Structure probing data (2A3 and DMS) for a 207-nucleotide construct.
For 2A3 the reverse transcriptase was SuperScript II with manganese.
DMS adducts were read by reverse transcription with MarathonRT.
Source: RMDB library M2RFPK, as collected in RNAgym.

RNA sequence: GGGAACGACUCGAGUAGAGUCGAAAAUGGUAGUCCGCCACUCUAAGGGGACGCCUUUAGAAGAAGAGGCUAGGUGGUAUUCCGGUGUGGGAUACAUGGUAAUAUGUAACGCUAAUUGCAUAAGAUUAAAACUUUGCAUACUUCGGUAUGCAAAGAAGUAUUGCGUUAAGUUCGCUUAACGCAAUACAAAAGAAACAACAACAACAAC
Reactivity to 2A3 in 0.01 (KOAc 150mM, MgCl2 10mM, bicine 150mM(pH8.5), 24C), signal-to-noise 6, nucleotides 027 to 156: u100g020g020u040a130g020u000c010c040g110c130c020a060c050u140c070u120a110a150g010g010g000g010a030c040g020c000c000u090u090u080a110g010a120a010g020a020a030g020a020g040g010c030u040a020g010g060u040g040g020u050a060u040u060c030c020g060g080u110g030u100g070g010g020a030u020a050c020a040u060g030g020u090a050a030u060a080u110g030u040a050a020c050g000c150u060a090a060u100u070g000c020a030u040a100a060g030a080u110u220a020a060a010a030c010u010u010u000g000c000a000u000a000c000u010u020c050g070g010u000a000u010g000c000a000a000a000g000a010a000
Reactivity to DMS in 0.01 (KOAc 150mM, MgCl2 10mM, bicine 150mM(pH8.5), 24C), signal-to-noise 2, nucleotides 027 to 156: u010g030g040u000a070g010u010c010c010g040c010c040a190c110u010c110u000a040a080g010g000g040g000a090c210g010c000c030u000u000u000a040g030a080a130g020a150a160g000a140g020g020c020u010a050g010g040u000g030g000u000a070u010u000c050c030g000g020u020g020u020g020g010g010a100u000a040c020a060u000g000g020u000a100a120u000a010u010g000u000a030a120c050g020c080u010a050a090u000u000g010c030a100u000a050a140g010a210u000u000a050a080a090a210c020u010u000u000g010c000a010u000a000c010u000u010c300g040g010u000a010u000g000c000a000a000a010g000a030a110